[RMDB]
RNA sequence: GGGAACGACUCGAGUAGAGUCGAAAAUUAAUGCUAACGGAUAGUAGGAACUUGCUCGUUUUAAAGGAAUAGAUUGUCAGUGCCUGGAGGUAUGGAUUGUGAUGCAAGGCAAGGAUGCAAUUGAAUGAUCAAUACUGCAAAUGAAAAGAAUCUUUCCUAUUAGUAUGCAAUUCGUUGCAUACUAAUAAAAAGAAACAACAACAACAAC
Reactivity to 2A3 in 0.01 (KOAc 150mM, MgCl2 10mM, bicine 150mM(pH8.5), 24C), signal-to-noise 5, nucleotides 027 to 156: u060u030a080a020u050g020c020u030a070a030c060g030g010a040u030a050g040u020a020g010g040a030a050c030u050u100g020c030u050c090g080u030u040u050u160a120a080a020g040g020a060a040u050a080g060a070u060u100g050u090c050a020g020u020g060c010c020u030g020g030a030g000g030u060a030u060g020g010a030u040u080g020u040g050a040u050g020c030a010a040g020g000c010a000a020g050g000a030u050g010c020a020a040u080u070g050a070a060u110g040a030u060c030a060a010u030a120c030u040g050c030a040a040a120u070g050a060a030a020a050g030a050a020u010c010u000u000u000c000c010
Reactivity to DMS in 0.01 (KOAc 150mM, MgCl2 10mM, bicine 150mM(pH8.5), 24C), signal-to-noise 5, nucleotides 027 to 156: u010u010a100a090u010g010c040u010a070a130c050g010g010a110u000a040g030u000a060g020g010a070a070c050u000u010g030c010u000c090g010u010u000u000u000a030a100a110g010g000a080a090u000a060g020a100u000u000g010u000c040a080g020u000g020c060c030u000g030g010a200g030g020u010a040u000g020g020a090u010u000g030u000g000a100u000g030c030a050a060g030g050c050a060a090g000g010a110u000g020c040a060a110u000u000g000a100a090u010g010a130u000c050a040a080u000a050c060u000g020c050a050a060a090u000g000a080a070a070a170g000a050a140u000c020u000u000u000c060c050
An RNA of 207 nucleotides, treated with 2A3 and DMS and read out base by base. Conditions: 150 mM KOAc, 10 mM MgCl2 and 150 mM bicine (pH 8.5), 24 C. The data come from the RNA Mapping Database (RMDB), library OK3TST.